[RMDB]
RNA sequence: GGGAACGACUCGAGUAGAGUCGAAAAUGGCAACCAGAACUACGCUCUCGCUGCUUAAGUGAGACAGUGACCGCCGAGCCCGGCCUUUGGCGCGGCGCGAACUGAACCAAAAGAAGGCUAGCCCCGGCGAGGUUCCAUAGCCGCAGGCGAAACUCCACUCUUUGUCAUUGUUCGCAAUGACAAAGAGAAAAGAAACAACAACAACAAC
Reactivity to 2A3 in 0.01 (KOAc 150mM, MgCl2 10mM, bicine 150mM(pH8.5), 24C), signal-to-noise 1, nucleotides 027 to 156: u110g030g000c090a070a060c030c030a060g070a150a060c160u190a110c140g040c100u020c000u000c000g000c020u040g020c070u300u210a070a010g020u000g020a030g000a010c000a000g000u000g000a000c000c000g010c000c000g000a020g010c020c030c000g030g000c000c000u000u000u010g010g000c010g000c010g000g040c010g000c000g010a020a010c010u150g070a030a060c120c000a040a010a000a020g050a010a010g020g010c020u000a000g020c000c010c000c000g010g000c010g000a060g050g090u120u060c080c020a050u090a030g000c000c010g010c050a010g000g010c010g000a020a020a020c040u100c070c020a090
The record gives the reactivity of an RNA of 207 nucleotides to 2A3. Conditions: 150 mM KOAc, 10 mM MgCl2 and 150 mM bicine (pH 8.5), 24 C. It was measured as part of the RMDB library ARCHII.